RNA sequence: GGGAACGACUCGAGUAGAGUCGAAAACUAUGAUGGCCAUGAACGGGAAGUCUGUGGAUGGGCGGCAGAUCCGGGUUGACCAGGCCGGCAAGUCAUCUGAUAACCGAUCCCGUGGGUACCGAGGUGGUGAAUUAAACCUCUUCGGAGGUUUAAUUCAAAAAGAAACAACAACAACAAC
Reactivity to DMS in 0.01 (KOAc 150mM, MgCl2 10mM, bicine 150mM(pH8.5), 24C), signal-to-noise 5, nucleotides 027 to 126: c040u000a070u010g010a100u010g010g010c010c020a080u010g010a090a070c040g000g000g000a090a180g010u010c040u020g010u020g000g020a050u000g010g000g010c080g000g010c030a050g000a050u010c040c040g000g000g020u000u010g010a080c070c070a100g010g010c010c020g000g000c140a080a060g010u010c030a040u010c040u020g000a100u030a110a100c070c030g000a110u010c010c020c010g020u000g000g000g020u010a080c060c040g000a080g010g020u010g000g030
Reactivity to 2A3 in 0.01 (KOAc 150mM, MgCl2 10mM, bicine 150mM(pH8.5), 24C), signal-to-noise 5, nucleotides 027 to 126: c030u040a060u180g060a040u060g050g020c020c010a030u120g080a080a010c030g050g010g050a050a060g080u010c030u040g060u070g040g030a060u060g040g050g020c020g030g000c010a010g000a060u060c050c030g040g020g020u090u110g040a110c000c040a030g040g070c000c030g000g010c050a070a000g030u040c010a040u000c030u040g060a100u040a140a030c030c030g020a070u050c020c000c000g010u060g010g030g020u060a050c020c010g010a020g010g050u060g030g010
An RNA of 177 nucleotides, treated with DMS and 2A3 and read out base by base.
In probing experiments dimethyl sulfate is read out at A N1 and C N3, which are open when not base-paired.